[RMDB]
RNA sequence: GGGAACGACUCGAGUAGAGUCGAAAAGCGCGCCUUUCUGGAACGGAGCUGGGCGCACCUGCCCGCCGGAACACUGGGGACGCUCUACGACUUCGUGGGCAGCGGCGACCCUGUCAGCGACCGUGAGACGUUUACUAGUGUUCGCACUAGUAAACGUAAAAGAAACAACAACAACAAC
Reactivity to 2A3 in 0.01 (KOAc 150mM, MgCl2 10mM, bicine 150mM(pH8.5), 24C), signal-to-noise 4, nucleotides 027 to 126: g010c030g000c010g010c030c000u070u090u090c040u080g090g100a090a060c050g030g010a010g000c060u090g000g010g000c000g000c010a050c000c010u010g000c000c000c000g030c040c040g060g030a110a040c050a020c080u070g000g000g010g070a070c050g080c090u020c020u070a050c040g090a090c050u090u100c080g020u050g000g020g000c010a040g000c050g100g020c030g110a230c010c000c010u030g100u070c040a010g000c020g070a150c010c010g010u040g030a040g020
Reactivity to DMS in 0.01 (KOAc 150mM, MgCl2 10mM, bicine 150mM(pH8.5), 24C), signal-to-noise 7, nucleotides 027 to 126: g010c060g020c030g010c010c020u000u010u010c040u010g010g010a180a080c120g000g000a300g000c090u000g000g010g020c020g020c020a040c070c020u010g000c020c000c010g030c100c090g020g000a060a050c050a050c100u000g010g000g000g000a150c100g000c040u000c010u000a090c050g000a160c180u010u000c080g020u010g010g000g000c030a040g010c260g000g010c090g010a140c030c030c010u000g010u010c040a040g000c020g010a120c130c020g000u000g000a090g010
The record gives the reactivity of an RNA of 177 nucleotides to 2A3 and DMS.
Values are in units of 0.01, from 0 to 300, in steps of 10.
Reactivities are given for positions 27 through 126.
The 2A3 profile rests on 7,326 reads.
Conditions: 150 mM KOAc, 10 mM MgCl2 and 150 mM bicine (pH 8.5), 24 C.
For DMS, 8,772 sequencing reads were counted.